[RMDB]
RNA sequence: GGGAACGACUCGAGUAGAGUCGAAAAGCAGAAUAAUAGAGCCACUGGUUUAAUGUUUCCUCAAGAUAGGUUUUAGUGUAAGCUAGUAUUCUGUGUGUUCGUAGAAAUGAUUCAAUACCUGCAGCUGCGUAUCUCGAACGUUCGCGUUCGAGAUACGAAAAGAAACAACAACAACAAC
Reactivity to DMS in 0.01 (KOAc 150mM, MgCl2 10mM, bicine 150mM(pH8.5), 24C), signal-to-noise 1, nucleotides 027 to 126: g010c000a030g000a040a030u000a010a040u010a020g020a060g030c170c010a040c020u020g000g000u010u010u000a090a050u000g010u030u000u000c010c020u000c170a130a130g000a110u000a040g020g030u000u000u000u010a020g020u000g000u000a100a100g010c010u010a030g000u000a000u000u010c000u000g040u000g050u000g020u010u010c020g010u010a050g000a020a030a110u010g010a090u020u000c110a050a080u010a080c040c040u020g020c080a070g030c040u010g000
Chemical mapping of a 177-nucleotide RNA with DMS. DMS adducts were read by reverse transcription with MarathonRT. The RNA was probed in 150 mM KOAc, 10 mM MgCl2 and 150 mM bicine (pH 8.5) at 24 C.